An RNA of 177 nucleotides, treated with 2A3 and read out base by base. Values cover nucleotides 27 to 126. The reactions ran in a buffer of 150 mM KOAc, 10 mM MgCl2 and 150 mM bicine (pH 8.5), at 24 C.

RNA sequence: GGGAACGACUCGAGUAGAGUCGAAAAACGACUACGUACGCGUAGUCGAAUUAAACAAAUUUUCUUAAAAUUUCUGAGGUUUGUUUAUUUCUUUUAUCAGUAAAUACUCCUGGUUACGACCAGGAGACUAGGACACAUGAUUCGUCAUGUGUCCUAGAAAAGAAACAACAACAACAAC
Reactivity to 2A3 in 0.01 (KOAc 150mM, MgCl2 10mM, bicine 150mM(pH8.5), 24C), signal-to-noise 3, nucleotides 027 to 126: a000c000g000a000c000u000a000c010g030u010a010c210g000c010g130u000a000g000u000c000g000a000a010u030u020a010a000a010c010a000a020a000u010u010u050u000c010u020u040a160a210a190a200u070u150u020c060u060g020a010g030g000u000u000u000g020u030u010u030a050u040u170u110c050u050u270u050u140a110u110c030a000g050u240a010a030a040u100a100c000u000c000c000u000g010g010u050u070a050c170g070a000c040c000a000g010g000a000g000a000